Structure probing data (2A3) for a 177-nucleotide construct. Conditions: 150 mM KOAc, 10 mM MgCl2 and 150 mM bicine (pH 8.5), 24 C. Values cover nucleotides 27 to 126. It was measured as part of the RMDB library OK1LIB. For 2A3 the reverse transcriptase was SuperScript II with manganese.
RNA sequence: GGGAACGACUCGAGUAGAGUCGAAAAUAAUAAUGUAACGAGCAAACGGCUUUUGUGGAACCCAUUCACCCCUUCACAAACUGAGGGAGGCGCGGCGUCCGCGUCCACAAGCGGUACGAGUGGUAACCCGAUAGCGCAGUUUCGACUGCGCUAUCGGAAAAGAAACAACAACAACAAC
Reactivity to 2A3 in 0.01 (KOAc 150mM, MgCl2 10mM, bicine 150mM(pH8.5), 24C), signal-to-noise 1, nucleotides 027 to 126: u270a000a000u000a000a010u040g180u150a060a050c010g000a090g010c050a060a060a060c000g010g010c000u000u000u020u000g070u040g070g000a010a010c050c080c000a000u030u070c000a130c000c000c000c000u030u040c000a120c090a250a120a050c300u080g000a100g000g010g000a000g020g100c030g000c000g000g000c040g160u020c010c000g000c070g020u030c000c000a010c000a000a010g120c050g010g040u080a030c100g000a020g040u010g070g000u000a080a020c020